The data come from the RNA Mapping Database (RMDB), libraries RFM100 and RFMREP. This 177-nucleotide RNA was probed chemically with 2A3 and DMS.
RNA sequence: GGGAACGACUCGAGUAGAGUCGAAAAACAGGAGUGGCGUACGCGCCACUCCUGACGCGAGUAAGACAGACUCUUCAGUCUGAGUUUGUGGAGAUGAGUGUAAAUCUGGCAUAGCAUACAGGUUAAACUCGACAUUAAAUUUCGAUUUAAUGUCGAGAAAAGAAACAACAACAACAAC
Reactivity to 2A3 in 0.01 (KOAc 150mM, MgCl2 10mM, bicine 150mM(pH8.5), 24C), signal-to-noise 8, nucleotides 027 to 126: a000c000a000g000g000a000g000u000g010g020c030g010u040a070c230g000c000g000c080c000a000c000u010c000c000u000g010a000c000g040c040g020a030g030u100a050a020g040a040c010a020g010a010c020u020c000u110u090c190a190g140u040c090u090g010a010g020u030u070u060g030u030g040g030a140g010a070u080g030a030g100u050g030u120a030a080a040u020c020u010g050g000c070a080u080a120g040c020a030u090a170c030a040g040g020u040u080a020a040a040
Reactivity to DMS in 0.01 (KOAc 150mM, MgCl2 10mM, bicine 150mM(pH8.5), 24C), signal-to-noise 8, nucleotides 027 to 126: a220c010a000g000g000a020g050u010g010g010c010g040u010a090c250g030c020g030c010c000a010c010u000c000c010u000g000a020c070g020c080g010a090g010u010a050a300g000a080c030a030g000a020c030u000c070u010u020c150a100g010u020c070u010g000a040g000u000u000u000g020u000g000g010a170g000a040u010g000a160g010u000g010u020a080a060a040u010c020u000g000g000c040a090u020a100g010c090a100u010a120c050a040g000g000u010u000a060a090a140